[RMDB]
RNA sequence: GGGAACGACUCGAGUAGAGUCGAAAAAACUUGUGGAUAUGGAUGUACUCAGUACUUGUCAGCGAUGAGGCUCGGAAACGAGCCUAUCGCUUGGAUUUAGGAACUGUACAUCCUAAGUCAAUUAUAACACAAGAUCAAUCUUCGGAUUGAUCUUGUGAAAAGAAACAACAACAACAAC
Reactivity to 2A3 in 0.01 (KOAc 150mM, MgCl2 10mM, bicine 150mM(pH8.5), 24C), signal-to-noise 1, nucleotides 027 to 126: a000a000c240u300u190g090u170g090g060a060u020a000u220g010g010a020u010g000u040a000c030u010c030a000g000u010a020c000u040u000g000u000c020a010g000c000g010a010u050g300a030g020g030c000u000c010g020g050a010a130a130c000g010a010g050c000c000u010a000u000c000g000c000u010u070g010g010a000u300u070u080a000g020g000a000a000c020u020g000u000a000c000a000u000c020c010u000a030a010g030u000c000a030a270u300u110a260u160a250a030
Reactivity to DMS in 0.01 (KOAc 150mM, MgCl2 10mM, bicine 150mM(pH8.5), 24C), signal-to-noise 2, nucleotides 027 to 126: a050a040c130u000u020g020u010g010g010a050u000a300u000g020g000a020u010g010u000a030c000u000c040a030g010u000a130c000u000u020g020u010c000a000g010c000g000a010u000g000a020g050g020c000u000c000g000g000a080a120a150c000g010a000g000c000c000u000a010u000c000g000c000u000u000g000g010a000u000u000u000a010g000g010a060a070c200u000g010u000a020c040a010u000c000c000u030a030a070g000u000c010a100a170u000u000a130u000a110a180
This 177-nucleotide RNA was probed chemically with 2A3 and DMS. For 2A3, 1,577 sequencing reads were counted. The reactions ran in a buffer of 150 mM KOAc, 10 mM MgCl2 and 150 mM bicine (pH 8.5), at 24 C. Values cover nucleotides 27 to 126. 2A3 is a SHAPE reagent: it acylates the 2'-hydroxyl of flexible nucleotides of all four kinds.